[RMDB]
RNA sequence: GGGAACGACUCGAGUAGAGUCGAAAAUGAUAUGAGUGUAAAUAUUUUGGGUUCUAACUAUGUGAUAUUAAACGGAGCAACAGCAACAAAAUUGGCUUCGCCAAUUAAGAUGGUGUUUAGAGCCUUAAGCGAUUACACAGUUCGCUGUGUAAUCGCUAAAAGAAACAACAACAACAAC
Reactivity to DMS in 0.01 (KOAc 150mM, MgCl2 10mM, bicine 150mM(pH8.5), 24C), signal-to-noise 1, nucleotides 027 to 126: u030g000a070u000a040u060g010a070g010u000g020u000a040a040a050u020a100u000u000u010u000g000g020g000u000u000c000u000a030a070c070u000a100u000g000u000g000a180u000a110u010u010a120a030a080c170g000g000a100g000c120a100a030c060a020g000c040a130a070c050a060a050a030a050u000u000g000g020c000u010u120c220g000c020c080a000a050u000u000a030a180g000a080u000g030g070u000g000u000u000u000a030g000a040g020c040c010u000u050a080
Reactivity to 2A3 in 0.01 (KOAc 150mM, MgCl2 10mM, bicine 150mM(pH8.5), 24C), signal-to-noise 3, nucleotides 027 to 126: u110g020a070u190a010u180g150a150g100u170g060u170a060a220a180u150a160u000u080u160u130g000g000g000u000u000c000u000a000a000c000u000a080u110g240u190g090a050u000a000u200u120a000a090a000c080g030g000a040g000c000a020a120c010a130g240c030a060a040c010a080a260a040a030u080u020g080g030c000u050u040c060g000c050c000a000a000u010u000a020a030g040a160u040g030g030u050g040u080u000u100a020g040a040g000c000c000u020u010a020

Record summary: This 177-nucleotide RNA was probed chemically with DMS and 2A3. The RNA was probed in 150 mM KOAc, 10 mM MgCl2 and 150 mM bicine (pH 8.5) at 24 C. Reactivities are given for positions 27 through 126. For DMS, 1,203 sequencing reads were counted.